[RMDB]
RNA sequence: GGGAACGACUCGAGUAGAGUCGAAAAUUCGCGUGAUUCGUCACGCGAAGAUUACCGAGAACCGUGCUCGGUAUAAACAUGGAACCCAUGGAAACAAGGGAAAUAGGCAGGCCUUCGGGCCUGCCAAUAGAUUAGUAUGAUUCGUCAUACUAAUCUAAAAAGAAACAACAACAACAAC
Reactivity to DMS in 0.01 (KOAc 150mM, MgCl2 10mM, bicine 150mM(pH8.5), 24C), signal-to-noise 5, nucleotides 027 to 126: u000u000c000g020c000g010u000g000a020u000u000c200g010u000c010a000c000g010c010g010a000a000g010a170u000u000a060c010c010g000a030g010a110a140c070c110g000u010g010c000u000c010g000g010u000a020u010a050a100a100c160a060u000g020g010a190a180c030c020c000a120u010g000g000a140a070a160c070a040a090g010g010g000a080a070a110u010a080g000g010c000a010g020g010c000c010u000u010c190g020g010g010c010c010u000g010c020c000a010a030
Reactivity to 2A3 in 0.01 (KOAc 150mM, MgCl2 10mM, bicine 150mM(pH8.5), 24C), signal-to-noise 3, nucleotides 027 to 126: u010u000c000g000c000g000u000g010a020u040u090c160g040u000c140a000c000g000c010g000a000a000g010a000u010u030a000c010c000g010a000g010a060a110c090c060g090u120g050c010u000c000g000g000u020a010u050a010a020a000c030a040u080g040g090a080a050c050c010c020a010u040g030g080a090a110a040c050a060a060g020g020g030a060a080a090u110a080g040g030c000a000g020g040c030c000u060u120c140g030g010g000c000c000u010g000c050c000a000a010